[RMDB]
Source: RMDB library OK1LIB, as collected in RNAgym. An RNA of 177 nucleotides, treated with 2A3 and read out base by base. 2A3 adducts were read by reverse transcription with SuperScript II with manganese.
RNA sequence: GGGAACGACUCGAGUAGAGUCGAAAACAAACGGGGCGGGGUUCAGGCGCGUUAUCUGAUUGAAGCCGGGAUGCGUAUGAAGCCCGAUCACAUCUUCCUGGCAGAGCUACGCGGGGAUGAAGCGUGGGGCCACUCAGUAGUUCGCUACUGAGUGGCCAAAAGAAACAACAACAACAAC
Reactivity to 2A3 in 0.01 (KOAc 150mM, MgCl2 10mM, bicine 150mM(pH8.5), 24C), signal-to-noise 1, nucleotides 027 to 126: c060a060a080a000c010g000g090g000g000c000g000g000g000g000u000u000c000a000g000g050c000g050c050g030u000u030a300u080c040u040g000a070u300u300g040a130a010g090c030c000g000g000g030a000u000g020c090g030u040a020u050g050a050a080g050c000c000c010g050a090u000c000a000c050a060u020c120u070u030c000c040u020g010g070c000a000g000a000g080c010u050a000c000g020c000g000g040g000g000a220u080g090a030a000g000c000g030u080g000g000